[RMDB]
RNA sequence: GGGAACGACUCGAGUAGAGUCGAAAAGGCACUGGCCAACAUUCCGGGAGUGGUUGAUCCGGAGGCGGUGCGCAGCGCGAUCGCCAAGAUCGAGGCCGCAGCGGUUGUUAUGGGGAACGAGGCCACAAUUUUAUUUAGUAUUCGUACUAAAUAAAAUAAAAGAAACAACAACAACAAC
Reactivity to DMS in 0.01 (KOAc 150mM, MgCl2 10mM, bicine 150mM(pH8.5), 24C), signal-to-noise 9, nucleotides 027 to 126: g010g010c030a060c070u000g020g030c020c020a130a140c180a210u010u000c010c010g000g000g010a080g020u000g010g000u000u000g000a130u010c010c010g000g010a070g010g020c020g010g010u000g010c020g020c050a050g010c040g020c020g000a020u000c020g010c110c160a100a140g000a020u000c020g000a090g010g020c030c030g010c040a080g010c060g000g010u000u000g000u000u000a060u010g000g000g010g010a060a070c090g010a130g000g010c020c030a050c110a070
Reactivity to 2A3 in 0.01 (KOAc 150mM, MgCl2 10mM, bicine 150mM(pH8.5), 24C), signal-to-noise 4, nucleotides 027 to 126: g060g000c020a010c110u130g170g000c010c010a040a040c030a160u160u030c010c000g020g020g010a070g040u060g020g030u050u070g030a040u020c010c000g010g020a030g020g020c010g010g000u050g000c020g000c030a030g040c030g000c020g020a020u010c010g020c080c070a100a030g020a020u030c010g010a050g060g050c030c010g000c020a020g040c000g040g000u040u030g020u040u120a130u130g010g000g010g020a060a020c020g020a050g000g030c020c010a010c010a020
Source information: Conditions: 150 mM KOAc, 10 mM MgCl2 and 150 mM bicine (pH 8.5), 24 C. An RNA of 177 nucleotides, treated with DMS and 2A3 and read out base by base. The DMS profile rests on 23,194 reads.